[RMDB]
The record gives the reactivity of an RNA of 177 nucleotides to DMS and 2A3. The data come from the RNA Mapping Database (RMDB), library OK2TST. The RNA was probed in 150 mM KOAc, 10 mM MgCl2 and 150 mM bicine (pH 8.5) at 24 C. Reactivities are given for positions 27 through 126. In probing experiments dimethyl sulfate is read out at A N1 and C N3, which are open when not base-paired.
RNA sequence: GGGAACGACUCGAGUAGAGUCGAAAAUCGCUCGCCCCGUCUUUCCUGCAUGCGGGGCGGAUCGACGUUGCCGCCACGUCGGAUCGCAGCAGGCGCGACGGCGCGAGCGCGUUACGGGCGCGAGCAAGGGAUAGCUAAAUUUCGAUUUAGCUAUCCCAAAAGAAACAACAACAACAAC
Reactivity to DMS in 0.01 (KOAc 150mM, MgCl2 10mM, bicine 150mM(pH8.5), 24C), signal-to-noise 8, nucleotides 027 to 126: u010c050g020c000u000c000g010c000c110c000c010g010u000c030u000u000u000c010c000u000g010c010a120u000g030c070g000g000g010g020c070g000g010a020u000c020g000a020c040g010u000u010g020c040c030g010c030c120a110c040g000u000c020g010g000a070u010c000g020c010a080g010c010a020g010g010c270g010c300g000a020c010g000g030c300g000c010g000a030g010c010g000c080g020u000u010a070c090g000g000g000c040g020c060g000a120g000c150a100a110
Reactivity to 2A3 in 0.01 (KOAc 150mM, MgCl2 10mM, bicine 150mM(pH8.5), 24C), signal-to-noise 4, nucleotides 027 to 126: u070c010g010c010u000c010g000c000c030c000c000g000u010c020u040u070u020c000c010u020g030c020a200u100g030c060g040g040g040g000c020g000g010a030u040c020g060a050c050g040u060u150g070c030c030g010c050c010a030c010g070u050c030g040g030a050u060c010g000c010a020g010c000a000g020g010c010g000c010g000a010c000g020g000c010g000c010g000a010g010c000g000c010g000u010u050a060c070g020g050g000c040g000c020g070a050g020c040a100a110